[RMDB]
RNA sequence: GGGAACGACUCGAGUAGAGUCGAAAAGAACGAGUUAAUCCCAUUUCGUCCAUCCCUUAAUGGGAACAACUCGUAGGCGUGUUGUUCGUGUAAGGGAUGGAUUUACUAUACGAAGAAUACGCCAAGACUACACGGAACUAUUCGUAGUUUCGUGUAGAAAAGAAACAACAACAACAAC
Reactivity to 2A3 in 0.01 (KOAc 150mM, MgCl2 10mM, bicine 150mM(pH8.5), 24C), signal-to-noise 9, nucleotides 027 to 126: g060a040a010c030g000a010g010u030u050a070a100u050c010c000c010a010u050u110u090c030g030u020c010c000a010u010c010c000c010u040u070a140a040u090g060g030g010a010a020c030a010a000c000u040c040g050u080a160g090g110c080g010u020g000u010u020g050u000u030c290g100u180g030u090a020a020g010g010g010a000u000g000g000a000u010u000u000a010c000u020a030u030a130c040g050a060a030g040a090a030u100a050c020g010c030c020a070a020g040a050
Reactivity to DMS in 0.01 (KOAc 150mM, MgCl2 10mM, bicine 150mM(pH8.5), 24C), signal-to-noise 9, nucleotides 027 to 126: g010a140a160c020g010a040g010u000u000a120a300u000c000c000c000a140u000u010u010c110g010u000c010c010a010u000c000c010c010u000u000a060a050u000g010g000g000a020a030c180a020a010c010u000c010g010u010a110g020g020c030g020u000g000u000u000g000u000u000c000g010u000g010u000a050a020g000g020g010a020u000g000g000a020u000u000u000a080c200u000a090u010a070c070g010a050a050g000a070a040u000a030c050g010c040c050a100a110g000a250
The data come from the RNA Mapping Database (RMDB), library OK2TRN.
An RNA of 177 nucleotides, treated with 2A3 and DMS and read out base by base.
The DMS profile rests on 37,945 reads.
For 2A3, 38,236 sequencing reads were counted.
Conditions: 150 mM KOAc, 10 mM MgCl2 and 150 mM bicine (pH 8.5), 24 C.
2A3 adducts were read by reverse transcription with SuperScript II with manganese.